[RMDB]
RNA sequence: GGGAACGACUCGAGUAGAGUCGAAAAUUGCUUUUUGUUUGUAAAGAUGGAAACUUGCUAUGUUGCUCAGCUGGUUCCGAAGUUUUGGCCUCAAGCAAUCCUCCUGCCUCGGCCUCCGGAAGCACUGGGAUUACAGGCAUAAGCCACCAGGCCUGACUGUAAAUACAAUGUUCGCAUUGUAUUUACAAAAAGAAACAACAACAACAAC
Reactivity to 2A3 in 0.01 (KOAc 150mM, MgCl2 10mM, bicine 150mM(pH8.5), 24C), signal-to-noise 2, nucleotides 027 to 156: u100u070g050c030u060u060u000u030u090g080u070u060u070g080u090a120a120a070g060a080u050g030g000a010a080a170c030u020u000g000c010u050a040u160g040u020u030g020c010u000c030a020g030c090u010g220g020u020u010c000c020g030a070a030g030u050u060u150u250g000g000c000c000u030c060a050a020g000c000a000a090u070c000c020u030c020c030u020g020c000c010u020c020g000g010c000c000u000c000c000g000g010a000a020g000c020a010c030u010g000g000g000a030u060u040a030c030a020g000g000c000a050u040a120a030g020c010c000a020c010c010a020g070g040c010c010u030g040a060c040
Reactivity to DMS in 0.01 (KOAc 150mM, MgCl2 10mM, bicine 150mM(pH8.5), 24C), signal-to-noise 2, nucleotides 027 to 156: u000u000g020c000u010u000u000u000u000g040u000u000u000g020u000a080a090a110g000a070u010g010g010a100a080a150c040u000u000g040c010u000a090u000g000u000u000g000c020u000c060a060g000c100u000g040g010u000u030c010c010g000a030a100g000u010u010u010u000g000g030c020c020u000c070a050a070g030c040a040a060u000c060c040u000c040c030u000g000c020c000u010c110g040g000c020c010u000c030c020g020g030a050a040g010c080a090c030u020g010g000g010a090u000u000a030c000a060g000g020c050a080u000a050a110g010c000c020a130c040c030a060g000g020c040c020u010g000a180c090
Notes
Structure probing data (2A3 and DMS) for a 207-nucleotide construct. Conditions: 150 mM KOAc, 10 mM MgCl2 and 150 mM bicine (pH 8.5), 24 C. Source: RMDB library OK3TST, as collected in RNAgym.